[RMDB]
RNA sequence: GGGAACGACUCGAGUAGAGUCGAAAAGAUUGGAUUACUGUCCUGAACUUGAUAAGCCAACAUUGGGUGAAAUAAUUAGAGUAUCAUACCCCUUACUGUAUGAGAGAUUUUUGUCACUGAGUGCCAAAUGCCCAGAGGUUAGAACUAUAGUUCCAGAUCCAUGCAAUAAUUUCGAUUAUUGCAUGGAAAAAGAAACAACAACAACAAC
Reactivity to 2A3 in 0.01 (KOAc 150mM, MgCl2 10mM, bicine 150mM(pH8.5), 24C), signal-to-noise 3, nucleotides 027 to 156: g060a030u080u090g020g010a010u020u110a190c060u140g030u080c010c020u030g030a050a040c010u060u010g020a050u120a110a030g030c010c000a030a010c030a120u060u130g030g020g000u060g070a050a100a080u110a040a060u120u140a070g040a020g090u070a050u030c010a010u040a070c000c010c040c060u040u120a070c070u070g040u040a010u040g000a010g000a000g030a070u010u110u060u060u100g020u020c020a010c060u080g080a040g070u020g040c020c000a050a030a000u050g000c000c000c010a030g010a030g060g000u020u090a020g030a040a010c020u030a020u050a240g040u040u000c020c000a020g000a080
Reactivity to DMS in 0.01 (KOAc 150mM, MgCl2 10mM, bicine 150mM(pH8.5), 24C), signal-to-noise 3, nucleotides 027 to 156: g010a140u000u000g020g010a110u010u010a050c070u000g030u010c030c030u010g010a040a090c030u000u000g020a140u000a060a110g010c030c060a080a070c040a060u000u010g000g030g000u010g000a020a070a090u000a040a090u000u000a080g020a160g010u000a070u010c020a090u000a060c010c060c030c100u000u010a100c060u000g020u000a260u010g010a090g010a190g010a150u000u010u010u000u000g010u000c030a080c020u010g010a090g040u000g000c030c050a050a090a120u000g020c020c010c020a150g020a020g010g010u000u000a030g010a030a050c050u000a090u000a100g020u000u000c020c020a090g000a300